Structure probing data (DMS and 2A3) for a 177-nucleotide construct. 2A3 adducts were read by reverse transcription with SuperScript II with manganese. The RNA was probed in 150 mM KOAc, 10 mM MgCl2 and 150 mM bicine (pH 8.5) at 24 C. DMS adducts were read by reverse transcription with MarathonRT. For 2A3, 2,043 sequencing reads were counted.
RNA sequence: GGGAACGACUCGAGUAGAGUCGAAAAAAAGUAAAAUGUCUCGAGAAGAAAAUGGUCCUAUUUGACCGCUAUACAUUGCUAACAUCAGGAAAUAGAAUAAUUUGCAUUCUCGAGUAAUCGGCUGAGCCGACAGUAGUUCUUUCGAGAACUACUGUCGAAAAGAAACAACAACAACAAC
Reactivity to DMS in 0.01 (KOAc 150mM, MgCl2 10mM, bicine 150mM(pH8.5), 24C), signal-to-noise 4, nucleotides 027 to 126: a100a070a070g000u000a040a080a100a100u010g000u010c010u000c000g000a020g010a010a020g000a120a020a020a010u000g030g040u000c030c060u010a040u000u000u010g000a120c050c070g000c040u000a070u010a110c160a130u010u000g010c110u000a100a100c190a090u000c110a090g020g000a070a020a010u000a010g010a010a030u000a070a020u000u000u000g000c120a180u000u000c000u010c000g010a030g010u000a090a070u000c130g010g020c030u000g000a110g020c140
Reactivity to 2A3 in 0.01 (KOAc 150mM, MgCl2 10mM, bicine 150mM(pH8.5), 24C), signal-to-noise 2, nucleotides 027 to 126: a000a000a010g120u120a090a090a080a080u100g120u030c010u000c010g010a000g010a000a000g020a020a050a000a010u030g050g010u030c000c010u030a110u080u010u060g130a070c040c020g000c020u040a030u020a170c060a120u140u220g030c020u050a130a010c010a080u140c030a010g020g080a040a000a060u020a020g020a060a000u090a090a030u040u000u050g040c040a090u030u000c010u000c000g000a000g000u000a000a030u020c020g040g030c040u050g030a030g060c020